About this RNA: The record gives the reactivity of an RNA of 207 nucleotides to 2A3 and DMS. The DMS profile rests on 5,602 reads. The reactions ran in a buffer of 150 mM KOAc, 10 mM MgCl2 and 150 mM bicine (pH 8.5), at 24 C. For 2A3 the reverse transcriptase was SuperScript II with manganese.

[RMDB]
RNA sequence: GGGAACGACUCGAGUAGAGUCGAAAAUGCAAGUAAUGCUAUUGUUGGAAUCACCGUACCUAUUUAGGUUUACGCUCCAAGAUCGGUGGAUAGCAGCCCUAUCAAUAUCUAGGAGAACUGUGCUAUGAAAACGGUAUUGGCUUCGGCCAAUACCGAAUCUGAGAACUAUGUUCGCAUAGUUCUCAGAAAAAGAAACAACAACAACAAC
Reactivity to 2A3 in 0.01 (KOAc 150mM, MgCl2 10mM, bicine 150mM(pH8.5), 24C), signal-to-noise 4, nucleotides 027 to 156: u110g010c030a040a030g050u230a150a060u110g020c030u050a030u080u120g100u070u090g060g030a110a070u100c010a020c010c000g000u020a030c000c000u070a180u170u180u220a030g010g010u010u040u060a040c050g010c030u000c020c010a040a010g020a070u080c030g030g040u030g050g030a020u030a000g020c030a030g010c000c000c020u050a050u080c020a100a070u040a030u180c030u010a010g010g040a060g030a040a010c070u070g020u050g150c020u090a050u180g130a040a080a060a050c010g000g000u000a000u000u000g010g000c010u010u040c140g050g000c000c020a000a000u000a000c000c000g000a000a010
Reactivity to DMS in 0.01 (KOAc 150mM, MgCl2 10mM, bicine 150mM(pH8.5), 24C), signal-to-noise 3, nucleotides 027 to 156: u000g020c040a100a150g020u000a120a120u000g020c000u010a050u000u010g010u000u000g000g010a120a130u000c020a050c040c020g010u000a050c000c020u000a190u010u010u000a050g010g000u010u010u000a070c100g020c040u000c020c020a100a080g020a040u000c060g010g000u000g000g020a080u020a040g000c030a160g030c120c060c010u000a110u000c040a120a140u000a100u010c080u000a150g000g000a100g000a060a090c080u010g010u010g020c030u000a110u000g000a070a040a110a150c010g000g000u000a020u000u000g010g030c010u010u000c300g050g020c000c010a020a020u000a010c000c000g000a010a000